[RMDB]
RNA sequence: GGGAACGACUCGAGUAGAGUCGAAAAUGGUGAGAUGGUGGGCUCUGCUAAGCCCUGGGGUGGGCGUAGGAGCAGAAGCCAGAGCCUGGGGCCUCUGAGUGAGUGGGCUCAGUGAGGGGCAGGCCCAGCCUCAUGUGCUUUGAGGUCUUUGAGAGCCUCAUUAUCAGUAUUUCGAUACUGAUAAUGAAAAAGAAACAACAACAACAAC
Reactivity to DMS in 0.01 (KOAc 150mM, MgCl2 10mM, bicine 150mM(pH8.5), 24C), signal-to-noise 1, nucleotides 027 to 156: u020g010g030u010g000a090g010a070u000g020g030u000g000g040g010c010u000c020u010g020c030u000a070a130g030c000c000c000u000g050g000g010g030u000g000g000g000c000g030u010a130g020g010a100g020c030a100g030a110a200g000c020c000a090g010a090g020c020c020u010g010g020g020g020c060c020u000c010u010g000a050g040u000g000a160g060u000g020g010g030c020u020c030a060g010u000g010a120g000g000g000g000c050a060g040g010c000c020c000a060g000c010c010u010c000a070u000g010u010g010c270u000u000u060g010a030g020g000u000c010u000u000u020g010a210g000a120g010c020c070
Reactivity to 2A3 in 0.01 (KOAc 150mM, MgCl2 10mM, bicine 150mM(pH8.5), 24C), signal-to-noise 3, nucleotides 027 to 156: u100g020g010u040g020a040g000a080u060g020g100u050g020g020g000c030u070c010u160g010c020u050a070a020g000c000c000c000u020g000g020g010g040u100g060g040g000c020g040u060a100g040g160a060g050c070a040g050a120a010g000c020c020a030g020a020g050c000c000u000g000g000g000g020c020c000u020c030u020g020a020g010u030g000a090g030u090g030g110g000c010u010c000a010g010u020g050a070g020g090g010g000c000a010g010g020c000c000c010a020g030c020c000u010c010a020u070g090u100g030c050u060u040u040g010a000g050g000u000c050u040u100u110g100a100g000a000g030c000c010
Overview: The record gives the reactivity of an RNA of 207 nucleotides to DMS and 2A3. The RNA was probed in 150 mM KOAc, 10 mM MgCl2 and 150 mM bicine (pH 8.5) at 24 C. The DMS profile rests on 3,720 reads. DMS adducts were read by reverse transcription with MarathonRT.